[RMDB]
An RNA of 177 nucleotides, treated with 2A3 and DMS and read out base by base. Source: RMDB library OK2TST, as collected in RNAgym. Reactivities are rounded to 0.1 and cut off at 0 and 3. Conditions: 150 mM KOAc, 10 mM MgCl2 and 150 mM bicine (pH 8.5), 24 C.
RNA sequence: GGGAACGACUCGAGUAGAGUCGAAAACUAUGCGCAACCGUCACCGUCGCAUUUGCCGCCAGAAGGAGGUUGAACAUCGGCUUGCCGACAAUAUUGGAACGCCCGAUCACCACGGCAUUGAGGCCGAGCGUCAAAAUGGUUUCGACCAUUUUGACGCAAAAGAAACAACAACAACAAC
Reactivity to 2A3 in 0.01 (KOAc 150mM, MgCl2 10mM, bicine 150mM(pH8.5), 24C), signal-to-noise 1, nucleotides 027 to 126: c020u050a060u110g010c070g000c040a070a010c020c020g080u080c000a030c040c030g080u060c000g010c040a010u050u030u180g040c010c010g000c010c010a030g020a100a040g130g030a020g020g050u070u060g030a110a000c000a110u040c000g020g030c000u060u000g000c000c000g060a060c060a110a160u180a150u110u120g080g000a140a020c030g110c020c010c010g020a080u050c040a010c050c010a050c000g000g000c060a030u030u260g060a060g000g140c000c000g010a010
Reactivity to DMS in 0.01 (KOAc 150mM, MgCl2 10mM, bicine 150mM(pH8.5), 24C), signal-to-noise 1, nucleotides 027 to 126: c040u010a060u000g010c170g000c050a070a140c020c070g000u010c020a060c000c060g010u000c100g050c070a140u000u020u000g060c040c090g000c080c060a040g010a110a070g010g010a090g020g000u000u010g000a130a140c120a070u000c000g000g010c000u000u000g040c030c020g000a020c150a110a060u000a210u000u000g010g000a160a050c100g000c000c000c030g010a080u000c110a180c070c060a090c020g020g020c020a090u000u010g050a140g040g010c060c020g000a140